[RMDB]
RNA sequence: GGGAACGACUCGAGUAGAGUCGAAAACAACUUCGUUUACAGUACUUUGAACCUGAACAAACUUUUGAUAUAUUCGACCACGAAUAUGUUAAACGUUAUGAUGUUCAUUUCUAUCAUAAACGUGGCGCUAGACGUGACGAUUCGUCGUCACGUCUAGAAAAGAAACAACAACAACAAC
Reactivity to DMS in 0.01 (KOAc 150mM, MgCl2 10mM, bicine 150mM(pH8.5), 24C), signal-to-noise 2, nucleotides 027 to 126: c030a150a130c010u000u000c030g020u000u000u000a040c130a090g010u000a050c210u040u000u000g010a000a010c120c170u010g020a120a160c090a070a030a000c010u010u000u000u000g010a000u000a010u000a020u000u000c000g000a180c240c300a080c060g000a000a000u000a010u000g050u010u000a010a000a020c040g010u010u000a030u010g010a100u000g010u000u010c030a000u010u010u000c150u000a060u000c090a100u000a000a000a010c000g010u000g010g010c140g000
Reactivity to 2A3 in 0.01 (KOAc 150mM, MgCl2 10mM, bicine 150mM(pH8.5), 24C), signal-to-noise 2, nucleotides 027 to 126: c040a000a030c020u040u030c020g000u020u010u020a040c050a100g060u030a080c090u040u050u120g000a020a030c010c050u040g040a070a020c010a020a030a000c000u020u060u010u030g020a020u000a000u000a000u020u020c010g030a100c040c140a280c150g010a010a010u010a010u010g020u000u020a030a050a010c020g000u010u020a040u120g170a040u070g000u020u000c010a010u030u040u040c040u090a070u070c010a040u050a020a050a010c010g010u000g050g000c070g000
The data come from the RNA Mapping Database (RMDB), library OK2TST. Chemical mapping of a 177-nucleotide RNA with DMS and 2A3. 2A3 is a SHAPE reagent: it acylates the 2'-hydroxyl of flexible nucleotides of all four kinds. The DMS profile rests on 1,248 reads. 2A3 adducts were read by reverse transcription with SuperScript II with manganese.